[RMDB]
RNA sequence: GGGAACGACUCGAGUAGAGUCGAAAAUUGCAUGUCGGCAUGGGCACGCCGUAAAACUACCCGCAAUCAAUAAACGCAAACAACGCAAACUACGCUCCCGCUUACGCCAAAGCUGCGUAAGUCUAACUCUUCGGAGCCGUCAAGCCUCACAAUGCUACCAUAGGAUGUCCUUCGGGACAUCCUAUGGAAAAGAAACAACAACAACAAC
Reactivity to 2A3 in 0.01 (KOAc 150mM, MgCl2 10mM, bicine 150mM(pH8.5), 24C), signal-to-noise 4, nucleotides 027 to 156: u090u090g030c040a030u100g050u140c020g000g020c000a050u060g030g010g000c030a010c050g000c000c010g070u070a000a010a050a060c030u100a100c030c010c010g040c020a070a170u140c050a030a120u180a180a080a030c090g000c050a060a070a090c040a030a120c090g000c050a070a070a020c040u080a010c050g000c020u030c030c020c000g020c000u000u000a000c010g000c000c030a210a170a020g070c250u120g000c050g000u000a000a000g010u020c000u030a050a060c010u030c030u140u080c050g040g040a010g000c010c000g030u050c020a050a040g010c000c000u040c010a090c030a000a070u080g050c000u080a080
Reactivity to DMS in 0.01 (KOAc 150mM, MgCl2 10mM, bicine 150mM(pH8.5), 24C), signal-to-noise 2, nucleotides 027 to 156: u000u000g040c030a100u000g050u040c030g030g080c040a130u010g010g000g010c010a070c100g030c030c020g000u000a050a050a050a040c050u000a040c020c000c010g000c160a150a170u000c060a060a120u000a030a170a070c080g010c060a050a120a090c040a100a060c030g030c030a070a050a030c030u020a130c050g010c010u010c030c010c070g000c000u010u000a010c000g060c000c030a110a110a220g030c120u010g020c000g020u000a020a030g000u000c060u000a040a090c020u000c060u010u010c090g020g010a080g010c000c020g000u010c020a070a150g000c000c030u000c060a050c080a050a130u010g000c040u010a130
Background: This 207-nucleotide RNA was probed chemically with 2A3 and DMS. The reactions ran in a buffer of 150 mM KOAc, 10 mM MgCl2 and 150 mM bicine (pH 8.5), at 24 C. The data come from the RNA Mapping Database (RMDB), library ARCHII. 2A3 adducts were read by reverse transcription with SuperScript II with manganese. DMS adducts were read by reverse transcription with MarathonRT.